The record gives the reactivity of an RNA of 177 nucleotides to DMS and 2A3. Reactivities are given for positions 27 through 126. For 2A3, 16,297 sequencing reads were counted.
[RMDB]
RNA sequence: GGGAACGACUCGAGUAGAGUCGAAAAGCUCGAGCCGCUCAUGCCGAUCUGGCGCGACGGACGGCUCGCGAUCGUCGAAGGCGUCGGCUAUCCGCAGCCGAAUCUGUCGCACUUUCGCUCGAUCGAAUAAAAUCCAUGAUUUCGAUCAUGGAUUUUAAAAAGAAACAACAACAACAAC
Reactivity to DMS in 0.01 (KOAc 150mM, MgCl2 10mM, bicine 150mM(pH8.5), 24C), signal-to-noise 8, nucleotides 027 to 126: g010c060u000c000g010a030g010c000c010g010c030u000c020a100u000g010c050c010g010a100u010c110u010g010g020c040g010c060g010a050c080g020g000a050c020g000g000c000u000c080g020c040g010a020u000c050g010u000c010g010a050a130g010g000c150g010u000c000g010g000c000u000a030u010c070c090g020c140a070g010c050c010g000a050a080u000c070u000g010u010c020g010c020a070c080u000u010u000c120g010c080u000c130g000a010u000c010g010a140a140
Reactivity to 2A3 in 0.01 (KOAc 150mM, MgCl2 10mM, bicine 150mM(pH8.5), 24C), signal-to-noise 7, nucleotides 027 to 126: g020c010u010c020g010a010g000c000c010g020c020u020c030a060u140g060c020c020g070a190u050c060u130g020g000c040g010c020g050a030c030g030g000a020c010g000g000c000u010c030g020c020g000a010u010c010g020u010c010g020a050a040g240g100c110g150u040c000g030g000c000u010a030u040c060c050g050c120a000g000c000c000g010a020a120u040c050u070g050u060c010g070c030a080c050u130u210u170c080g010c020u010c020g010a010u020c010g030a050a010
The RNA was probed in 150 mM KOAc, 10 mM MgCl2 and 150 mM bicine (pH 8.5) at 24 C.